[RMDB]
RNA sequence: GGGAACGACUCGAGUAGAGUCGAAAAGAUAUGGACCACAAACGUACACUAGAGCUUGGACCUCGGAAACGAGCUAGCUCAUGUACGCUAGUGGUCCUAAGUCAAAAUCAACGCUUCGGCGUUGAAACACGACCAUGUAGUUCGCUACAUGGUCGUGAAAAGAAACAACAACAACAAC
Reactivity to 2A3 in 0.01 (KOAc 150mM, MgCl2 10mM, bicine 150mM(pH8.5), 24C), signal-to-noise 2, nucleotides 027 to 126: g030a020u080a020u150g000g010a030c010c000a000c020a020a140a000c020g000u000a000c030a050c140u270a160g000a000g020c040u140u150g060g190a300c040c020u010c010g020g060a060a060a050c000g010a000g110c010u020a000g000c000u000c000a000u010g000u000a000c000g000c010u010a000g010u000g020g000u000c010c000u000a010a000g000u000c000a010a000a000a150u040c000a000a020c000g040c000u080u040c280g200g020c000g000u000u000g000a000a000a000
Reactivity to DMS in 0.01 (KOAc 150mM, MgCl2 10mM, bicine 150mM(pH8.5), 24C), signal-to-noise 2, nucleotides 027 to 126: g000a010u000a300u010g000g010a020c000c000a000c000a030a110a110c000g000u000a000c000a010c300u000a140g010a000g030c000u000u000g030g010a140c300c010u000c000g000g000a130a090a150c000g000a010g050c070u000a010g020c000u000c000a100u000g020u010a010c000g000c000u000a180g010u000g010g020u000c000c000u000a010a060g010u000c030a080a080a070a070u000c000a010a000c000g010c000u000u010c260g030g000c000g020u000u000g010a050a030a170
Chemical mapping of a 177-nucleotide RNA with 2A3 and DMS. As a SHAPE reagent, 2A3 marks flexible, mostly unpaired nucleotides at the ribose 2'-OH. The RNA was probed in 150 mM KOAc, 10 mM MgCl2 and 150 mM bicine (pH 8.5) at 24 C. The 2A3 profile rests on 3,327 reads. For 2A3 the reverse transcriptase was SuperScript II with manganese.